RNA sequence: GGGAACGACUCGAGUAGAGUCGAAAAAUGUUAGUGUAGUUGCGCGAGAGCGCGAGUGUUUUGAAUCUGCGAUAUGUGAAACCAGAUCCUUAACACUAAUCUACACUAACUCUACGGGCCUUCAAUCAGGUUUCACAUAUCGCUGAUUGAAGGCACACACUAGCUACAUCUUCGGAUGUAGCUAGUGAAAAGAAACAACAACAACAAC
Reactivity to DMS in 0.01 (KOAc 150mM, MgCl2 10mM, bicine 150mM(pH8.5), 24C), signal-to-noise 1, nucleotides 027 to 156: a050u000g010u000u020a020g030u020g010u000a010g010u010u010g040c000g030c010g000a300g020a300g000c000g050c010g000a030g020u000g000u000u010u000u000g000a000a030u000c010u000g030c040g020a020u010a020u000g050u010g010a120a090a070c080c030a050g020a000u000c000c010u020u000a010a030c050a020c000u000a050a050u000c020u010a000c000a020c010u000a010a000c010u000c100u000a120c100g030g010g020c000c000u020u000c000a020a020u000c010a020g030g000u000u000u010c050a160c140a190u000a020u000c000g050c020u000g010a050u000u000g000a010a020g010g070c000a040c010a130
Reactivity to 2A3 in 0.01 (KOAc 150mM, MgCl2 10mM, bicine 150mM(pH8.5), 24C), signal-to-noise 4, nucleotides 027 to 156: a010u170g000u000u000a000g000u000g010u000a010g010u020u170g020c010g000c010g010a070g020a040g100c000g010c010g010a000g000u000g000u010u010u000u000g020a030a010u000c000u010g000c010g010a000u000a020u170g080u000g040a110a040a040c040c000a010g000a000u010c010c000u010u020a010a000c000a000c010u030a040a120u040c000u000a000c000a000c000u000a000a010c000u000c000u020a090c060g050g090g000c000c000u000u010c000a000a010u000c000a010g040g040u010u090u090c060a070c010a040u070a010u020c040g010c040u000g000a000u000u000g000a000a000g000g040c000a000c000a000
The data come from the RNA Mapping Database (RMDB), library OK3TST. This 207-nucleotide RNA was probed chemically with DMS and 2A3. The DMS profile rests on 3,917 reads. Conditions: 150 mM KOAc, 10 mM MgCl2 and 150 mM bicine (pH 8.5), 24 C. For 2A3 the reverse transcriptase was SuperScript II with manganese.